[RMDB]
The record gives the reactivity of an RNA of 177 nucleotides to 2A3 and DMS. The data come from the RNA Mapping Database (RMDB), library OK2TRN. Conditions: 150 mM KOAc, 10 mM MgCl2 and 150 mM bicine (pH 8.5), 24 C.
RNA sequence: GGGAACGACUCGAGUAGAGUCGAAAACAAGACGAUGAUAGACGGCGUGCCUUGUCAGAUGAGAGCAAAGCCUGGUGCAGGAUUGGCAUCAUUCAUGAGCUGACGGCCGCAGUAGAGGCCCGCUACGCUUUCCUAACGAAUUCGUUCGUUAGGAAAGAAAAGAAACAACAACAACAAC
Reactivity to 2A3 in 0.01 (KOAc 150mM, MgCl2 10mM, bicine 150mM(pH8.5), 24C), signal-to-noise 6, nucleotides 027 to 126: c030a020a040g160a050c070g070a090u190g030a040u100a110g150a060c060g030g010c030g040u130g010c000c010u060u120g020u020c000a010g020a090u050g040a050g010a010g050c020a040a060a040g010c000c010u070g050g140u180g100c070a010g030g120a140u170u240g110g000c010a050u020c010a010u140u090c050a050u110g090a030g080c010u010g020a040c000g030g000c010c030g000c020a000g000u030a020g030a030g020g020c030c060c010g000c030u040a050c070g040
Reactivity to DMS in 0.01 (KOAc 150mM, MgCl2 10mM, bicine 150mM(pH8.5), 24C), signal-to-noise 7, nucleotides 027 to 126: c080a090a100g010a100c090g010a110u000g010a160u010a090g000a120c090g010g000c010g000u010g010c020c010u000u010g010u000c030a050g010a070u000g000a070g010a120g020c030a040a050a090g010c020c020u010g010g030u000g030c030a040g000g000a070u010u010g000g000c010a120u000c030a050u000u010c080a100u010g000a180g010c020u000g000a040c040g000g000c030c020g020c040a050g000u000a070g010a080g000g000c010c030c030g010c070u000a070c150g010